[RMDB]
RNA sequence: GGGAACGACUCGAGUAGAGUCGAAAAGAGAGGCCUCUUCCUAGGUCCGGAGUCUACCUCCAUCUGGUCCGUCCGGGCCCUCUUCGCCGGAGGCGCCCCCUCCCCGUCCUUAUCCUUCUUUCCAAGUUAGCGCGUAUCUUCGGAUACGCGAAAAGAAACAACAACAACAAC
Reactivity to 2A3 in 0.01 (KOAc 150mM, MgCl2 10mM, bicine 150mM(pH8.5), 24C), signal-to-noise 6, nucleotides 027 to 129: g050a000g000a030g010g030c020c000u060c030u110u060c020c030u030a040g020g010u010c030c030g010g000a000g030u030c080u110a080c000c000u040c010c010a070u050c060u060g020g020u040c010c010g060u030c040c030g000g010g000c010c040c010u020c030u110u060c030g050c020c030g090g020a040g020g010c030g010c010c000c020c000c010u000c000c000c000c000g040u050c030c000u040u050a050u050c000c000u020u000c000u020u030u000c030c000a090a060g060u070u060a040g120
Reactivity to DMS in 0.01 (KOAc 150mM, MgCl2 10mM, bicine 150mM(pH8.5), 24C), signal-to-noise 4, nucleotides 027 to 129: g040a110g040a130g040g010c050c000u010c080u070u030c000c080u010a120g000g000u030c020c060g010g030a070g020u040c090u000a160c100c050u030c040c020a090u030c070u020g000g000u020c000c060g010u020c010c020g000g000g000c030c000c070u000c020u030u030c100g050c090c070g050g030a180g020g050c000g030c000c000c000c000c000u020c000c000c000c000g050u050c020c020u030u090a000u060c050c030u000u000c020u010u000u040c010c030a020a030g040u020u040a140g040

Notes:
An RNA of 170 nucleotides, treated with 2A3 and DMS and read out base by base. DMS adducts were read by reverse transcription with MarathonRT. The RNA was probed in 150 mM KOAc, 10 mM MgCl2 and 150 mM bicine (pH 8.5) at 24 C.